[RMDB]
The record gives the reactivity of an RNA of 177 nucleotides to 2A3 and DMS. The 2A3 profile rests on 1,032 reads. The RNA was probed in 150 mM KOAc, 10 mM MgCl2 and 150 mM bicine (pH 8.5) at 24 C. The data come from the RNA Mapping Database (RMDB), library M2PK90.

RNA sequence: GGGAACGACUCGAGUAGAGUCGAAAAAUAAAGAGCGUCGCACACACACAGACUAAGUCUGACACUGACAGACGCUAAACCGCUCUGUCAGUGAGCGAGAUAUCGGUAUUAAAUAGAGCGGAAAAAACAGUGAGGAAAGGUUCGCCUUUCCUCACUGAAAAGAAACAACAACAACAAC
Reactivity to 2A3 in 0.01 (KOAc 150mM, MgCl2 10mM, bicine 150mM(pH8.5), 24C), signal-to-noise 1, nucleotides 027 to 126: a000u150a000a010a000g100a000g020c040g030u010c000g000c000a050c000a010c010a020c000a000c010a030g050a040c050u150a200a080g020u020c010u000g040a020c000a000c020u040g030a040c000a050g000a000c040g000c010u020a130a040a030c010c000g000c030u030c010u000g030u050c000a020g030u040g050a010g020c020g000a030g000a040u140a050u110c030g000g050u050a060u100u160a190a090a060u080a060g020a000g000c000g020g080a050a020a000a000a020a040
Reactivity to DMS in 0.01 (KOAc 150mM, MgCl2 10mM, bicine 150mM(pH8.5), 24C), signal-to-noise 1, nucleotides 027 to 126: a030u000a070a110a050g020a140g010c080g010u000c000g010c120a110c060a050c100a120c170a160c010a030g020a040c010u010a150a180g000u000c020u000g000a130c030a020c010u000g000a000c000a000g050a010c020g040c030u000a020a050a030c100c080g000c090u000c010u020g010u040c020a020g020u020g010a040g010c020g010a030g000a100u000a020u000c010g000g040u010a020u000u000a060a060a090u000a090g020a030g000c030g000g000a000a040a040a040a010a150